[RMDB]
RNA sequence: GGGAACGACUCGAGUAGAGUCGAAAAUCAAGACGUGCAACGCUGGAUAGCCGACGAACUGUGUAUCGGAAAAACGCUUGUCUUCCCCUCCGGGAGAACAACAAUUGGAGAUGUGCGAGCGGACGUCGACGGCGAACUUGACCCGGACGUGAUCGCAGCUAUUAUAAUAGUUCGCUAUUAUAAUAGCAAAAGAAACAACAACAACAAC
Reactivity to 2A3 in 0.01 (KOAc 150mM, MgCl2 10mM, bicine 150mM(pH8.5), 24C), signal-to-noise 6, nucleotides 027 to 156: u100c020a020a030g100a090c030g050u080g030c060a110a070c090g010c060u100g000g090a120u100a080g060c030c010g020a050c030g030a110a130c080u140g030u050g040u200a090u110c040g050g000a050a020a040a030a030c030g020c050u030u040g000u020c010u030u040c000c000c000c010u020c020c020g000g050g030a080g080a060a030c070a040a010c000a050a100u130u110g040g010a040g030a060u090g030u050g090c030g030a050g010c030g010g030a020c000g010u030c020g020a050c020g020g010c010g040a100a100c090u110u180g050a080c010c000c010g020g000a020c030g020u040g040a050u060c030g010c020a020
Reactivity to DMS in 0.01 (KOAc 150mM, MgCl2 10mM, bicine 150mM(pH8.5), 24C), signal-to-noise 3, nucleotides 027 to 156: u010c070a070a080g030a120c070g020u000g010c020a080a070c020g010c000u000g000g020a130u000a140g040c030c020g000a070c040g030a090a070c050u010g000u000g030u000a100u000c030g000g010a070a080a170a090a060c120g000c040u000u000g010u000c020u000u010c010c010c000c070u010c120c070g000g020g000a080g030a050a060c050a030a080c040a080a150u000u000g030g010a150g030a070u000g020u010g030c000g000a070g000c050g000g020a070c020g010u000c010g020a090c010g020g020c000g020a050a110c070u000u020g000a290c030c000c010g010g010a090c090g010u000g000a100u010c020g010c040a110